RNA sequence: GGGAACGACUCGAGUAGAGUCGAAAAGAUAUGGAGAACAGGCGACGAAGUAUCUCACUUCGGAAACGAAGUGAGGAUACAGAGCCUCCUCCUAAGUCAAACUACAUAGUGUUCGCACUAUGUAGAAGAACUGUGUCUGGUUCGCCAGACACAGUUCAAAAGAAACAACAACAACAAC
Reactivity to DMS in 0.01 (KOAc 150mM, MgCl2 10mM, bicine 150mM(pH8.5), 24C), signal-to-noise 1, nucleotides 027 to 126: g060a060u000a250u010g010g000a040g000a100a120c300a010g000g000c020g040a150c220g000a180a180g000u000a010u000c010u000c000a040c000u000u010c000g020g000a070a050a170c010g010a030a010g020u000g000a030g020g000a030u000a010c020a040g010a280g050c000c000u000c160c000u010c000c000u000a070a080g000u000c060a090a170a130c000u010a010c000a000u000a000g010u000g020u000u010c170g010c010a000c000u010a000u000g020u000a010g000a090a070
Reactivity to 2A3 in 0.01 (KOAc 150mM, MgCl2 10mM, bicine 150mM(pH8.5), 24C), signal-to-noise 1, nucleotides 027 to 126: g010a040u130a060u120g010g000a050g010a210a080c120a160g060g020c020g130a300c180g100a300a110g030u030a020u000c000u000c010a000c010u000u010c000g000g040a070a050a030c010g020a020a000g000u000g010a030g000g000a000u000a000c000a000g020a000g000c000c000u000c020c000u000c020c000u000a110a050g010u030c100a210a020a000c020u000a000c000a010u030a000g000u020g020u080u070c290g080c100a020c010u010a000u020g010u010a000g000a030a000